The data come from the RNA Mapping Database (RMDB), libraries RFM100 and RFMREP.
This 177-nucleotide RNA was probed chemically with DMS and 2A3.
DMS adducts were read by reverse transcription with MarathonRT.
Values cover nucleotides 27 to 126.

RNA sequence: GGGAACGACUCGAGUAGAGUCGAAAAACGACUCGUAUACGUACGAGUCGAAUAGGGUGUGUGACUGGUUGACCAGAGGGGCAUGCACUGUGUUCACCCUGUGGGCCACCUAGUCACCAACCCUCAACUAUCAUGGAUUCUUCGGAAUCCAUGAUAGAAAAGAAACAACAACAACAAC
Reactivity to DMS in 0.01 (KOAc 150mM, MgCl2 10mM, bicine 150mM(pH8.5), 24C), signal-to-noise 5, nucleotides 027 to 126: a090c000g010a020c000u000c000g020u000a030u010a050c190g030u000a010c000g000a010g000u000c010g020a040a030u010a020g000g010g010u000g000u030g010u000g010a020c010u000g000g010u000u010g010a120c000c010a050g010a040g000g000g000g000c100a040u010g010c150a120c170u020g030u020g000u010u020c170a190c040c010c010u000g020u000g000g000g010c070c050a010c010c000u020a000g000u000c000a010c010c030a050a040c000c010c010u000c160a080a150
Reactivity to 2A3 in 0.01 (KOAc 150mM, MgCl2 10mM, bicine 150mM(pH8.5), 24C), signal-to-noise 9, nucleotides 027 to 126: a000c000g000a010c000u000c000g010u020a030u010a070c230g030u010a010c000g010a000g000u000c000g000a000a020u080a000g000g000g000u020g010u010g000u000g010a000c000u010g010g010u020u020g020a040c010c000a010g020a010g140g000g010g020c030a020u080g070c110a090c300u180g030u020g020u130u120c060a130c050c000c000u080g080u020g130g000g010c010c000a000c010c010u020a010g000u000c000a000c000c000a010a080c000c000c000u010c010a010a080